This 207-nucleotide RNA was probed chemically with 2A3 and DMS. DMS adducts were read by reverse transcription with MarathonRT. Conditions: 150 mM KOAc, 10 mM MgCl2 and 150 mM bicine (pH 8.5), 24 C. Values are in units of 0.01, from 0 to 300, in steps of 10. Values cover nucleotides 27 to 156.
[RMDB]
RNA sequence: GGGAACGACUCGAGUAGAGUCGAAAAGUUCAUCCCCUGAUCAAGGAUGCCCGAAACGGUGAGGCGGAAAGCAAAUUAAUUAACGUCAACCCAUCGGGACGGUUGGCCAGUUAAGAAGUGAGGAUUCAAAAGAUCGAACCGUUCGCGGUUCGAUCAACAUCCAUAGACACUUCGGUGUCUAUGGAUGAAAAGAAACAACAACAACAAC
Reactivity to 2A3 in 0.01 (KOAc 150mM, MgCl2 10mM, bicine 150mM(pH8.5), 24C), signal-to-noise 5, nucleotides 027 to 156: g040u060u100c030a050u040c040c000c000c010u050g020a070u030c020a030a030g060g010a070u120g010c020c000c000g050a100a100a020c070g040g010u060g040a140g020g020c010g020g070a130a040a020g110c170a130a050a020u140u130a060a070u060u090a120a040c010g000u000c000a010a000c000c000c020a040u030c020g000g000g020a010c000g040g040u020u000g010g000c010c030a020g010u040u110a100a070g020a070a020g050u090g060a060g080g040a070u110u090c090a090a050a030a050g020a000u000c000g000a000a000c000c000g000u050u070c200g030c010g110g010u000u000c000g000a000u010c000a000a000
Reactivity to DMS in 0.01 (KOAc 150mM, MgCl2 10mM, bicine 150mM(pH8.5), 24C), signal-to-noise 1, nucleotides 027 to 156: g020u010u000c050a100u000c000c000c000c020u000g010a070u000c060a170a080g020g020a100u020g000c110c020c020g000a140a120a090c100g030g100u010g000a100g050g020c000g010g000a080a050a120g010c030a110a070a160u000u010a030a100u000u020a150a170c020g030u000c000a030a030c010c010c050a300u040c100g020g000g000a060c060g000g000u000u000g000g000c020c130a060g000u000u000a080a050g000a010a070g040u010g010a120g000g020a170u000u000c090a020a110a190a110g000a050u000c000g000a000a020c020c000g050u000u000c300g020c030g000g000u040u000c000g000a000u000c000a000a100